Structure probing data (2A3 and DMS) for a 177-nucleotide construct. The DMS profile rests on 1,411 reads. Conditions: 150 mM KOAc, 10 mM MgCl2 and 150 mM bicine (pH 8.5), 24 C.
[RMDB]
RNA sequence: GGGAACGACUCGAGUAGAGUCGAAAAGGCCAAGGAAGGUAGAUGAUGGGUCAUGUGGCCAUGCCCGCUGGCCUGCAUGGAGGAGGAGGUGGCCUUUACCUGGGACCUGCCCUUCCUAAGGUGAUGACGCUAAGCUGUUGUUCGCAACAGCUUAGCGAAAAGAAACAACAACAACAAC
Reactivity to 2A3 in 0.01 (KOAc 150mM, MgCl2 10mM, bicine 150mM(pH8.5), 24C), signal-to-noise 1, nucleotides 027 to 126: g090g000c010c010a050a000g000g000a000a050g020g000u120a030g050a190u150g020a070u130g030g040g080u050c020a070u150g060u090g050g020c000c040a040u100g220c000c000c000g000c000u030g030g090c000c000u030g000c030a000u180g080g030a040g000g030a040g040g030a080g010g060u100g010g000c000c000u040u090u010a010c030c010u000g080g030g000a050c000c000u010g000c030c000c000u000u000c000c020u050a100a110g050g000u120g010a210u190g030a020
Reactivity to DMS in 0.01 (KOAc 150mM, MgCl2 10mM, bicine 150mM(pH8.5), 24C), signal-to-noise 2, nucleotides 027 to 126: g050g000c010c000a150a060g000g000a040a070g000g010u010a070g040a080u010g000a110u000g000g010g020u000c090a060u020g010u000g000g000c000c060a050u000g010c070c060c010g030c300u000g000g030c010c000u000g030c120a010u000g020g010a300g000g010a090g040g030a110g010g020u040g010g000c020c000u010u000u000a090c030c040u000g000g020g000a090c090c000u000g000c070c050c030u020u000c020c000u020a070a130g000g000u010g000a080u010g010a130